RNA sequence: GGGAACGACUCGAGUAGAGUCGAAAAAUAGAUAUUCGUAUCUAUGAUAGAACCUUUGUGUAGAGACAUGCAAGGCAUGCUCCUCCCAUUGGGAGGAGAACUACAUGCCGGGGCAACAGCUCUACACUCUGGUACGACUUCCUUGUUCGCAAGGAAAGUUGCGUUAUUGAUUCGUCAAUAACGCAACAAAAGAAACAACAACAACAAC
Reactivity to 2A3 in 0.01 (KOAc 150mM, MgCl2 10mM, bicine 150mM(pH8.5), 24C), signal-to-noise 4, nucleotides 027 to 156: a000u000a000g010a000u030a020u070u130c170g020u050a000u030c010u000a020u040g080a060u060a120g200a090a050c000c000u000u010u010g000u000g000u000a000g000a000g020a060c020a080u030g020c030a040a090g000g000c000a010u000g010c020u000c010c000u010c000c020c080a300u170u300g010g000g000a000g010g000a000g000a010a010c010u090a010c000a010u000g000c000c020g000g000g060g020c020a070a060c020a150g020c000u000c000u000a000c000a000c000u000c000u000g000g020u040a090c070g070a060c050u020u010c000c000u000u010g010u020u100c270g030c090a000a000g050g000a040a060a090
Reactivity to DMS in 0.01 (KOAc 150mM, MgCl2 10mM, bicine 150mM(pH8.5), 24C), signal-to-noise 2, nucleotides 027 to 156: a040u000a040g000a000u010a040u000u010c280g030u000a010u010c000u010a020u000g000a200u000a050g000a140a090c010c000u010u000u010g030u000g050u000a030g000a050g000a100c050a260u020g020c030a290a290g040g030c010a040u000g010c000u010c010c000u020c010c020c000a300u000u000g070g050g010a030g000g010a070g020a020a060c030u010a260c000a030u000g010c000c000g010g020g010g030c010a100a060c070a140g000c010u010c010u010a050c030a010c010u010c050u020g020g020u000a040c070g000a120c090u000u000c000c000u000u000g010u000u010c220g070c050a050a090g000g010a000a020a130